[RMDB]
RNA sequence: GGGAACGACUCGAGUAGAGUCGAAAAGAUAUGGAUCCCAGAGUCCGAUAAGAAGCCAUCGGAAACGAUGGGCUUCUUUUGACGGAUGAUGGGAUCCUAAGUCAAAACCAAUACUUCGGUAUUGGAAGACAUCACUAGGGUUCGCCCUAGUGAUGUCAAAAGAAACAACAACAACAAC
Reactivity to DMS in 0.01 (KOAc 150mM, MgCl2 10mM, bicine 150mM(pH8.5), 24C), signal-to-noise 1, nucleotides 027 to 126: g010a060u010a300u000g020g010a000u000c000c000c000a000g020a300g000u000c000c020g040a130u060a000a000g000a000a010g080c010c030a000u000c000g030g000a120a050a120c000g050a010u000g040g000g020c000u000u000c000u030u000u010u010g030a170c150g000g010a020u010g020a300u000g000g020g000a000u000c000c000u000a010a070g000u000c000a100a050a100a090c000c000a000a010u000a000c000u000u010c250g040g010u000a020u000u000g000g010a160a200